[RMDB]
RNA sequence: GGGAACGACUCGAGUAGAGUCGAAAACAAUCUGGCCACUGAGCAGGUGCAAGGCCAGGAGCCAAUUCCUGGGGAGGGUUUCAUUAAUAUCCGUUAUGCCCAGAAGCCUGAGGUACCUAAUGGAGCCUACACCAUAUGAUUUCGAUCAUAUGGUGUAAAAAGAAACAACAACAACAAC
Reactivity to DMS in 0.01 (KOAc 150mM, MgCl2 10mM, bicine 150mM(pH8.5), 24C), signal-to-noise 9, nucleotides 027 to 126: c130a110a080u030c040u010g010g010c020c060a110c110u010g000a140g020c100a100g010g010u010g010c090a080a100g000g000c010c000a020g000g000a090g000c120c110a090a150u020u000c020c010u000g010g000g000g010a170g000g010g010u010u000u000c040a060u020u010a050a080u020a080u040c030c020g000u020u030a070u020g000c010c010c050a100g000a120a130g010c050c020u010g000a100g010g010u020a070c150c050u010a060a060u010g000g010a130g010c050c030
Reactivity to 2A3 in 0.01 (KOAc 150mM, MgCl2 10mM, bicine 150mM(pH8.5), 24C), signal-to-noise 9, nucleotides 027 to 126: c040a010a070u070c030u030g030g020c010c010a090c120u110g050a080g080c050a060g050g110u120g050c050a090a090g060g020c000c000a000g000g000a010g050c020c010a040a110u100u040c000c010u030g000g010g010g040a090g020g020g010u020u030u040c040a030u030u110a090a060u080a070u120c000c010g030u090u080a040u140g040c000c010c010a040g060a130a020g050c020c030u060g010a080g030g020u050a060c010c010u040a060a050u050g010g010a000g000c000c000
Structure probing data (DMS and 2A3) for a 177-nucleotide construct. Source: RMDB library OK1LIB, as collected in RNAgym. For 2A3 the reverse transcriptase was SuperScript II with manganese. The RNA was probed in 150 mM KOAc, 10 mM MgCl2 and 150 mM bicine (pH 8.5) at 24 C.